[RMDB]
RNA sequence: GGGAACGACUCGAGUAGAGUCGAAAAUUAUAACGUGGCUGCCCGGCCUGGAACAGUCCCACUACCUGCUCCAGAAGGACCCAAGGUUGACAGAUCCUUUCAGACCUAUGCUAAGGAAACAAAAUAAAGAUGCAAUAUGAUUCGUCAUAUUGCAUCUAAAAGAAACAACAACAACAAC
Reactivity to DMS in 0.01 (KOAc 150mM, MgCl2 10mM, bicine 150mM(pH8.5), 24C), signal-to-noise 4, nucleotides 027 to 126: u000u010a080u000a100a120c150g010u000g000g020c050u010g010c030c020c010g010g000c050c010u020g000g010a080a080c100a080g010u000c030c020c030a110c080u000a080c110c010u000g010c030u000c030c030a040g010a120a100g000g020a090c030c010c040a090a070g000g010u000u000g000a080c110a070g000a080u000c010c020u000u010u010c060a080g010a120c070c050u000a060u000g010c070u010a050a080g010g000a110a060a050c090a050a070a050a080u010a040a090
Reactivity to 2A3 in 0.01 (KOAc 150mM, MgCl2 10mM, bicine 150mM(pH8.5), 24C), signal-to-noise 1, nucleotides 027 to 126: u070u010a090u060a300a000c120g030u090g060g000c000u010g040c000c000c000g010g000c030c000u010g070g010a080a030c060a020g070u040c000c010c010a040c000u000a010c030c040u020g020c010u030c020c010a050g050a070a080g040g000a040c060c020c020a060a000g060g020u030u020g010a020c010a040g080a130u000c000c010u060u030u060c030a060g020a130c030c000u060a030u180g000c010u080a030a000g080g000a100a130a120c050a010a110a050a020u220a070a230